[RMDB]
RNA sequence: GGGAACGACUCGAGUAGAGUCGAAAACAGUAAAUGUGGCAACAGUGGUGAUUAACAGCCUGAUAGGGUGCUGCAGAGGCCCACUGUUUUGCUACUAAAGGUCUCUGCAGACGAUGAAAGACAUCGACGCCCUAAUGGAUUUCGAUCCAUUAGGGCGAAAAGAAACAACAACAACAAC
Reactivity to 2A3 in 0.01 (KOAc 150mM, MgCl2 10mM, bicine 150mM(pH8.5), 24C), signal-to-noise 1, nucleotides 027 to 126: c000a030g020u130a030a170a190u170g040u040g090g010c000a000a000c020a140g000u000g010g000u050g020a230u130u210a110a000c060a030g030c020c000u050g000a000u080a190g000g130g000u020g030c000u000g000c000a000g000a000g000g000c000c010c000a000c000u000g060u000u100u020u060g110c110u030a040c010u060a000a010a000g040g000u000c000u000c040u010g020c020a020g000a000c000g000a000u060g060a030a030a030g040a000c000a000u020c000g020a060
Reactivity to DMS in 0.01 (KOAc 150mM, MgCl2 10mM, bicine 150mM(pH8.5), 24C), signal-to-noise 2, nucleotides 027 to 126: c060a070g000u090a000a050a060u000g040u030g000g000c030a070a030c060a000g090u000g040g060u010g050a150u050u020a060a120c100a140g000c020c000u000g000a200u030a020g010g010g030u070g080c000u010g000c010a000g000a030g000g000c000c000c080a150c200u020g000u000u040u030u010g000c020u020a080c050u030a010a130a040g000g030u000c000u010c000u000g000c000a010g000a150c110g000a000u040g020a060a080a120g020a220c000a000u000c020g010a300